[RMDB]
Structure probing data (DMS and 2A3) for a 177-nucleotide construct. 2A3 adducts were read by reverse transcription with SuperScript II with manganese. The reactions ran in a buffer of 150 mM KOAc, 10 mM MgCl2 and 150 mM bicine (pH 8.5), at 24 C. Reactivities are given for positions 27 through 126. The DMS profile rests on 567 reads.
RNA sequence: GGGAACGACUCGAGUAGAGUCGAAAAAGAAAUAGCGAUAAUCGUAAGAGAAAUGUCCUUCACAUAGCGCUACGCACAGAACUAUUAGUAGCGCAAUAGCUAUUGAUGGACAUUACCUGCCAAAAAAACUGGUCCUAAGGUUCGCCUUAGGACCAGUAAAAGAAACAACAACAACAAC
Reactivity to DMS in 0.01 (KOAc 150mM, MgCl2 10mM, bicine 150mM(pH8.5), 24C), signal-to-noise 1, nucleotides 027 to 126: a080g020a130a030a060u000a110g020c040g000a150u000a030a050u000c050g020u000a030a120g000a080g000a090a000a070u000g000u010c000c010u000u000c000a000c290a030u000a040g020c000g000c060u000a000c040g130c180a070c220a060g000a040a180c200u020a070u000u000a110g020u000a040g110c000g010c120a010a070u010a080g000c050u000a010u000u000g000a000u000g000g000a000c010a040u000u010a010c050c000u000g000c000c110a000a000a020a140a050a100
Reactivity to 2A3 in 0.01 (KOAc 150mM, MgCl2 10mM, bicine 150mM(pH8.5), 24C), signal-to-noise 1, nucleotides 027 to 126: a020g110a030a070a000u100a050g030c020g030a060u150a080a110u170c020g010u010a000a060g060a020g040a110a030a020u000g080u000c000c000u020u020c010a060c000a100u080a020g000c000g040c010u010a000c010g140c040a080c010a120g220a280a030c060u080a300u300u120a100g020u010a000g030c010g000c060a010a040u060a030g000c000u000a010u040u040g010a030u010g000g000a000c010a000u010u030a030c010c010u070g040c010c020a000a110a040a000a000a000